RNA sequence: GGGAACGACUCGAGUAGAGUCGAAAACUAUGCAGAUUCGUCUGCAUAGAGACCCGAUGUAGCGGCACUUACACAGCUUCAUACACGUAAGAAGUGCAAUAAAGGGACGAGGGUUCGCCCUCGUCAACAAUAUCACAGGCUUCGGCCUGUGAUAUUGAAAAGAAACAACAACAACAAC
Reactivity to DMS in 0.01 (KOAc 150mM, MgCl2 10mM, bicine 150mM(pH8.5), 24C), signal-to-noise 5, nucleotides 027 to 126: c000u000a000u000g000c000a000g010a020u000u010c180g020u000c000u000g000c010a000u000a010g010a130g000a140c000c010c010g010a090u000g010u010a080g010c100g000g000c020a030c030u000u000a070c110a070c110a140g000c040u000u000c110a080u010a150c200a090c110g000u000a100a100g010a050a020g010u000g020c050a130a060u020a050a070a100g020g010g000a010c000g000a020g010g010g020u000u010c250g000c000c000c010u000c000g010u000c000a020a060
Reactivity to 2A3 in 0.01 (KOAc 150mM, MgCl2 10mM, bicine 150mM(pH8.5), 24C), signal-to-noise 4, nucleotides 027 to 126: c000u010a000u000g010c000a010g010a050u040u090c100g110u010c080u000g000c000a000u000a000g000a020g020a010c040c000c010g010a090u140g060u160a040g060c120g030g000c030a010c030u050u110a050c110a000c010a090g030c020u060u030c010a080u110a200c070a010c190g060u050a090a010g040a090a020g060u000g030c030a060a080u210a170a120a070g180g010g000a000c000g000a000g000g000g000u020u040c160g160c000c000c000u000c000g000u000c000a000a000